Notes
Chemical mapping of a 207-nucleotide RNA with 2A3 and DMS. 2A3 adducts were read by reverse transcription with SuperScript II with manganese. The data come from the RNA Mapping Database (RMDB), library OK3TST. Conditions: 150 mM KOAc, 10 mM MgCl2 and 150 mM bicine (pH 8.5), 24 C.
RNA sequence: GGGAACGACUCGAGUAGAGUCGAAAAGUGGUUUCAAGUAAUGUCAUUUCCUCCUCUAUUGGUUCAUAUGUUUAUCUCAUGCCAUUAGAGUGACCAUGACUUUCACAAGGUCGGGGACUGCGUCUUAAAUCAUCUGCCACUAUUGCCUGGCCCGUUACCCACUCGUAAAUUUCGAUUUACGAGUGGGAAAAGAAACAACAACAACAAC
Reactivity to 2A3 in 0.01 (KOAc 150mM, MgCl2 10mM, bicine 150mM(pH8.5), 24C), signal-to-noise 4, nucleotides 027 to 156: g030u040g030g040u030u060u090c090a070a040g040u100a110a100u120g060u090c010a010u040u080u090c000c010u000c000c000u000c010u000a010u000u020g020g020u120u120c120a120u140a080u180g100u070u190u190a240u070c120u010c030a020u100g010c020c000a010u000u000a010g010a010g000u100g000a010c020c010a010u050g020a020c010u050u130u090c110a090c030a160a070g000g020u010c000g020g010g000g020a030c040u080g030c070g060u050c030u060u190a160a200a100u080c030a030u030c050u070g010c010c010a040c040u080a170u040u140g040c020c010u010g020g010c000c000c000g040u040u050a080
Reactivity to DMS in 0.01 (KOAc 150mM, MgCl2 10mM, bicine 150mM(pH8.5), 24C), signal-to-noise 1, nucleotides 027 to 156: g040u000g020g050u000u010u020c090a030a180g010u000a080a060u000g030u010c030a050u000u000u000c020c050u040c010c000u010c000u000a050u000u000g000g050u000u000c070a100u020a150u010g020u000u000u010a120u010c120u000c070a120u000g000c000c000a040u000u000a030g010a070g000u000g030a030c100c030a060u020g020a020c040u000u000u000c160a140c050a050a130g000g050u000c020g040g020g000g000a040c070u000g030c130g000u020c000u010u010a030a060a080u000c030a040u010c020u020g030c020c000a100c050u000a080u000u000g020c010c000u000g020g040c000c000c000g030u000u010a160
DMS adducts were read by reverse transcription with MarathonRT.